[RMDB]
RNA sequence: GGGAACGACUCGAGUAGAGUCGAAAACGCGCAACUUCGGUUGCGCGAGGAUCGCUUCGGCGAUCCAAGAGUGUGCUACGGCACACUCAGGUCGCACGGUGACGUGCGACCAAGAAGAGCGUACGCGCUCUUCAACGCGUUCUACGGAACGCGAGUACUACUUCGGUAGUACAGGCAAACAUCAUUUGGCCUUAAAUGGGAUUCUGUGAGAGGGGAUCCCUCCAUUGACAGCUGGACUGUUCUUUGGGGCCUUAUGUGGUGUUUGUAGACUAAGGUUCGCCUUAGUCAAAAGAAACAACAACAACAAC
Reactivity to 2A3 in 0.01 (KOAc 150mM, MgCl2 10mM, bicine 150mM(pH8.5), 24C), signal-to-noise 9, nucleotides 027 to 266: c010g010c000g010c000a000a010c010u060u090c280g150g000u000u000g010c000g000c000g000a000g000g000a000u000c000g010c020u070u090c260g130g000c000g000a000u000c000c000a010a040g000a000g000u000g000u000g000c010u030a100c300g120g000c000a000c000a000c000u000c000a010g000g000u000c000g000c000a000c010g010g020u060g030a030c000g000u000g000c000g000a000c000c000a000a010g000a000a000g000a000g010c000g010u050a050c260g020c010g000c150u000c000u000u000c010a010a020c010g000c000g000u000u000c020u030a070c250g130g000a000a000c000g000c000g000a030g000u000a000c000u000a000c000u030u080c230g100g000u000a000g000u000a010c010a020g100g000c000a000a000a000c000a000u010c000a010u030u090u300g000g000c010c000u030u030a010a020a020u020g000g000g000a010u020u010c020u060g160u150g160a120g030a060g120g060g000g010a000u000c000c000c000u000c000c000a000u000u010g010a010c000a010g030c040u220g110g110a300c020u040g080u290u130c010u040u010u010g010g000g000g000c000c000u030u030a100u040g010u000g000g010u000g000u000u000u010g010u020a070
Reactivity to DMS in 0.01 (KOAc 150mM, MgCl2 10mM, bicine 150mM(pH8.5), 24C), signal-to-noise 3, nucleotides 027 to 266: c020g000c010g020c000a010a010c010u000u030c170g010g020u000u000g010c000g020c000g010a020g000g000a010u000c000g030c000u010u030c140g010g010c010g010a000u000c000c010a070a060g000a020g000u000g020u000g010c010u010a130c200g030g010c000a000c000a000c000u010c010a040g000g010u000c010g010c010a010c000g000g010u020g010a100c010g070u000g020c000g030a010c000c010a050a080g000a010a010g000a010g010c000g020u010a110c230g040c010g020c000u000c000u000u000c010a110a170c010g000c000g000u000u000c010u000a130c150g020g000a000a000c000g000c000g010a060g000u000a000c010u000a010c000u000u020c160g010g000u000a000g010u000a000c000a140g000g000c000a010a010a020c000a010u000c000a010u000u000u000g000g000c010c000u000u000a010a010a260u000g000g020g000a010u000u000c010u000g000u010g020a160g010a170g000g000g000g000a000u000c000c000c000u000c000c000a000u000u000g010a020c010a010g010c030u010g000g010a170c000u000g000u000u010c010u000u000u000g010g000g000g000c000c000u020u000a000u010g010u000g010g020u000g000u000u000u000g000u000a060
Chemical mapping of a 307-nucleotide RNA with 2A3 and DMS. Conditions: 150 mM KOAc, 10 mM MgCl2 and 150 mM bicine (pH 8.5), 24 C. For DMS the reverse transcriptase was MarathonRT.